This 177-nucleotide RNA was probed chemically with 2A3. As a SHAPE reagent, 2A3 marks flexible, mostly unpaired nucleotides at the ribose 2'-OH. The RNA was probed in 150 mM KOAc, 10 mM MgCl2 and 150 mM bicine (pH 8.5) at 24 C.
[RMDB]
RNA sequence: GGGAACGACUCGAGUAGAGUCGAAAAAAAAACAUGCAGAAAUAAGCAUGGUGCUCAAAAAGUAGAACGAAAGAUCAAAAAUUGAGAAAAUGAUCCUACGAACUACAAGAGCGGAUCAUAAAAAAAACCUUCAAUAUCGAUUCGUCGAUAUUGAAGGAAAAGAAACAACAACAACAAC
Reactivity to 2A3 in 0.01 (KOAc 150mM, MgCl2 10mM, bicine 150mM(pH8.5), 24C), signal-to-noise 1, nucleotides 027 to 126: a030a000a010a000a000c030a000u000g010c010a000g090a210a190a060u300a230a000g000c000a000u010g060g010u050g000c000u010c000a120a150a030a030a000g060u020a040g010a000a000c000g010a070a010a000g020a030u040c000a000a090a120a160a070u220u240g090a090g090a050a030a010a020u050g000a000u000c000c000u000a000c010g020a030a020c010u010a000c030a010a090g000a020g000c080g010g000a070u150c130a140u300a060a010a040a000a010a040a020a020